The record gives the reactivity of an RNA of 207 nucleotides to DMS and 2A3. The DMS profile rests on 1,716 reads. Reactivities are given for positions 27 through 156.
RNA sequence: GGGAACGACUCGAGUAGAGUCGAAAAGAAAGAAAGAAAUGAGUUUUCUUCGACUGACGGAUUAUUGCAGAGCACUGCAAGGGAACAGAAAAACUCUUUUUCAGCCGACCGUCUGGGCACACCUGAAUCACGACCGGAAGCUUCGGCUUCCGGUCAACGUAGCUAAUCAGUUCGCUGAUUAGCUACGAAAAGAAACAACAACAACAAC
Reactivity to DMS in 0.01 (KOAc 150mM, MgCl2 10mM, bicine 150mM(pH8.5), 24C), signal-to-noise 1, nucleotides 027 to 156: g030a070a040a100g030a200a060a090g000a050a040a090u010g020a130g000u000u000u000u000c000u000u000c000g000a130c080u000g010a070c040g010g010a130u000u020a100u000u030g030c060a050g000a230g060c140a100c010u000g010c030a040a060g010g020g000a080a270c030a100g000a030a060a070a050a100c040u000c010u000u030u000u000u000c000a100g000c080c000g000a030c040c040g010u010c070u000g040g050g010c040a100c040a070c050c050u020g010a110a150u030c070a110c120g000a010c000c000g020g000a050a030g070c000u000u000c300g040g010c020u010u000c000c000g050g020u020c000a010a020
Reactivity to 2A3 in 0.01 (KOAc 150mM, MgCl2 10mM, bicine 150mM(pH8.5), 24C), signal-to-noise 1, nucleotides 027 to 156: g030a010a040a010g050a090a080a000g050a040a100a060u200g040a110g060u000u040u000u020c020u080u020c010g050a100c070u050g020a010c020g030g020a080u150u100a040u000u210g000c000a020g000a080g130c090a020c300u000g000c000a000a020g060g020g030a060a030c060a130g040a020a110a010a030a040c010u050c050u060u060u000u020u010c030a060g020c020c010g010a020c010c000g000u020c030u030g000g000g040c020a000c000a000c020c040u060g080a070a070u080c060a050c190g010a000c000c000g000g000a000a000g000c000u030u090c180g100g000c000u020u000c000c020g000g010u000c010a000a000